[RMDB]
RNA sequence: GGGAACGACUCGAGUAGAGUCGAAAAGAUCACCUGUUCGCAGGUGAUCAAUCUCCCACUUGAUCGAAGUCUCACAGCCUCGUUGCCCACGAGGCACGCGCGUAUUGAUCCGCUUCGGCGGAUCAAAGUUAGCGCUAGUUUUCGAACUAGCGCUAACAAAAGAAACAACAACAACAAC
Reactivity to DMS in 0.01 (KOAc 150mM, MgCl2 10mM, bicine 150mM(pH8.5), 24C), signal-to-noise 3, nucleotides 027 to 126: g010a000u000c000a000c000c000u000g010u000u010c210g020c020a010g000g010u000g030a000u000c000a070a090u000c190u010c000c000c000a170c130u000u000g000a050u000c040g000a070a110g020u010c010u010c040a140c180a110g010c000c000u000c000g000u000u010g010c050c050c050a280c030g000a020g010g020c000a010c120g010c060g020c070g020u010a180u000u010g010a010u000c000c010g010c000u000u010c170g000g000c000g010g000a010u010c000a010a030a090
Reactivity to 2A3 in 0.01 (KOAc 150mM, MgCl2 10mM, bicine 150mM(pH8.5), 24C), signal-to-noise 3, nucleotides 027 to 126: g000a000u010c010a010c010c000u010g020u050u080c250g000c090a000g000g000u020g000a000u000c000a000a000u010c010u000c000c020c000a030c050u070u190g060a120u100c050g050a070a040g110u030c020u030c080a090c040a040g010c010c000u020c020g030u080u170g110c010c010c010a010c010g000a020g000g060c000a010c010g020c000g010c020g000u070a110u110u080g000a000u000c010c010g010c000u040u080c210g120g000c020g020g000a000u000c000a000a000a000
This 177-nucleotide RNA was probed chemically with DMS and 2A3. The RNA was probed in 150 mM KOAc, 10 mM MgCl2 and 150 mM bicine (pH 8.5) at 24 C. For DMS the reverse transcriptase was MarathonRT. For DMS, 2,559 sequencing reads were counted.